[RMDB]
Chemical mapping of a 177-nucleotide RNA with 2A3 and DMS.
For DMS, 5,071 sequencing reads were counted.
Source: RMDB library OK2TRN, as collected in RNAgym.

RNA sequence: GGGAACGACUCGAGUAGAGUCGAAAACGCUACCGAUGGCGUAUUUUCCUUCACUGAAUCUAGUGAUAUCGAGGAAGAGGCAAUCGAUGUUACAUUGCCCCAGGAAGAGGUUGAGGGCUCUGGUAGAGACGGUAAUGAGUUUCGACUCAUUACCGUCAAAAGAAACAACAACAACAAC
Reactivity to 2A3 in 0.01 (KOAc 150mM, MgCl2 10mM, bicine 150mM(pH8.5), 24C), signal-to-noise 3, nucleotides 027 to 126: c020g020c010u030a040c020c080g190a160u160g000g000c020g000u020a070u020u020u000u010c000c000u010u040c040a030c010u030g100a120a210u060c060u080a090g020u000g040a030u020a030u150c030g010a030g040g040a110a090g040a070g110g030c030a010a060u030c050g070a030u080g060u110u050a030c050a130u090u180g040c040c000c000c010a000g100g010a050a030g020a010g050g040u090u110g050a100g010g010g000c000u010c030u050g070g000u060a060g020a020
Reactivity to DMS in 0.01 (KOAc 150mM, MgCl2 10mM, bicine 150mM(pH8.5), 24C), signal-to-noise 4, nucleotides 027 to 126: c050g030c020u000a130c120c130g010a080u000g010g020c020g000u000a060u000u000u000u000c010c010u000u010c040a070c010u010g000a170a170u000c100u010a060g020u000g000a030u010a040u000c080g020a080g000g010a090a070g010a080g010g000c030a070a050u000c050g010a080u000g000u000u000a070c080a080u010u010g010c050c020c040c040a110g010g000a070a060g000a120g010g000u000u000g010a080g010g010g010c040u000c040u000g000g020u010a060g010a190